[RMDB]
Chemical mapping of a 177-nucleotide RNA with 2A3 and DMS.
DMS adducts were read by reverse transcription with MarathonRT.
Source: RMDB libraries RFM100 and RFMREP, as collected in RNAgym.
RNA sequence: GGGAACGACUCGAGUAGAGUCGAAAAAGGACCGGGUCUGACGCACCACUGGUGCAUCGGUUGUACUGUCAAGUGCAUGGCCGAGUAGCUAAGUGCGGACGGGAUAAGCGCUGAAAGCAUCUAAGCGGUUUGAGACGAAUUUCGAUUCGUCUCAAACAAAAGAAACAACAACAACAAC
Reactivity to 2A3 in 0.01 (KOAc 150mM, MgCl2 10mM, bicine 150mM(pH8.5), 24C), signal-to-noise 3, nucleotides 027 to 126: a000g100g010a010c010c000g010g010g060u000c020u050g020a010c020g000c000a000c000c000a130c030u050g050g000u120g030c120a060u020c010g000g020u020u000g010u010a000c010u030g180u300c080a170a040g010u010g000c020a030u080g130g010c000c000g000a010g000u030a010g020c000u010a180a070g000u030g000c000g010g010a030c010g010g000g000a040u040a070a070g020c010g000c060u030g020a120a080a030g020c020a030u020c040u080a040a040g020c020g070
Reactivity to DMS in 0.01 (KOAc 150mM, MgCl2 10mM, bicine 150mM(pH8.5), 24C), signal-to-noise 4, nucleotides 027 to 126: a070g010g010a130c040c020g000g010g000u010c010u010g000a190c030g000c040a070c000c010a040c030u020g000g020u000g010c210a190u000c010g000g000u000u000g000u010a020c010u000g010u040c300a060a060g030u000g010c000a050u080g030g000c020c000g010a020g000u030a300g010c010u000a020a110g010u000g000c020g000g000a160c080g000g010g000a090u000a080a130g000c040g020c030u000g000a090a110a100g000c110a040u000c050u000a150a130g020c080g000